The record gives the reactivity of an RNA of 207 nucleotides to 2A3.
Reactivities are given for positions 27 through 156.
High 2A3 reactivity points to a flexible backbone, as in loops and unpaired stretches.
For 2A3 the reverse transcriptase was SuperScript II with manganese.
The 2A3 profile rests on 374 reads.
It was measured as part of the RMDB library OK3TST.

RNA sequence: GGGAACGACUCGAGUAGAGUCGAAAAUUACAUAGUUCACUUCUUACAUUUAUUGCUCAUCUCAAUCUUUCUCUAUUUUGCACACAGAUGCAAGUGUAGCUCCUAGGAUAACGUCUGGCACAUAGAAAACCCUCAGUACAUUUCUGUUGAAUGAAUACGCUAAAUGCAUGUUCGCAUGCAUUUAGCGAAAAGAAACAACAACAACAAC
Reactivity to 2A3 in 0.01 (KOAc 150mM, MgCl2 10mM, bicine 150mM(pH8.5), 24C), signal-to-noise 1, nucleotides 027 to 156: u130u030a030c140a070u130a040g050u100u140c030a090c050u100u000c030u190u140a000c140a150u150u080u120a100u000u250g100c120u110c030a110u000c030u040c100a160a190u050c070u010u100u000c090u010c000u070a090u120u170u030u130g000c030a000c030a020c060a100g100a160u030g030c060a040a110g040u040g040u100a020g000c000u010c020c010u040a110g090g000a140u050a060a020c000g010u000c000u050g090g010c080a050c010a050u130a010g040a010a050a020a010c000c000c030u030c010a000g100u140a030c010a110u080u150u120c050u100g040u050u000g000a030a000u070g020a060a000u110a080